[RMDB]
RNA sequence: GGGAACGACUCGAGUAGAGUCGAAAAUCGCAACGAGAUAUUCAACGGCGCGCUGGCAAUCACAAACAUCAUCCUGGAUCUCGACAUCGCCCUGAAGGAGCCCGUCCCCUUUCGCCGGCUCCACGAGUGUUAAGAUGAUCUUCGGAUCAUCUUAACAAAAAGAAACAACAACAACAAC
Reactivity to DMS in 0.01 (KOAc 150mM, MgCl2 10mM, bicine 150mM(pH8.5), 24C), signal-to-noise 4, nucleotides 027 to 126: u000c040g020c060a080a110c080g000a130g000a060u000a070u010u020c050a090a100c110g000g020c060g000c060g010c060u000g010g000c080a110a090u000c080a050c110a060a080a090c110a070u000c070a050u000c030c030u010g000g000a050u000c030u000c010g010a080c100a060u000c030g020c020c020c020u010g000a120a100g020g010a040g010c030c000c070g010u000c020c010c020c120u000u000u010c070g000c070c120g000g000c020u010c010c010a100c130g010a090g010
Reactivity to 2A3 in 0.01 (KOAc 150mM, MgCl2 10mM, bicine 150mM(pH8.5), 24C), signal-to-noise 2, nucleotides 027 to 126: u080c020g000c060a060a060c070g020a030g030a120u110a110u170u180c070a080a010c050g010g000c000g000c030g030c080u070g000g010c020a020a070u090c040a050c070a130a100a020c030a070u080c010a020u020c010c010u050g070g000a070u050c020u000c020g010a020c010a050u090c040g030c000c000c030u070g060a180a060g030g000a010g000c050c000c000g020u080c030c010c000c010u050u150u020c030g000c030c010g030g000c000u050c000c000a010c020g080a050g090
Notes
Structure probing data (DMS and 2A3) for a 177-nucleotide construct. For DMS the reverse transcriptase was MarathonRT. The reactions ran in a buffer of 150 mM KOAc, 10 mM MgCl2 and 150 mM bicine (pH 8.5), at 24 C. For 2A3 the reverse transcriptase was SuperScript II with manganese.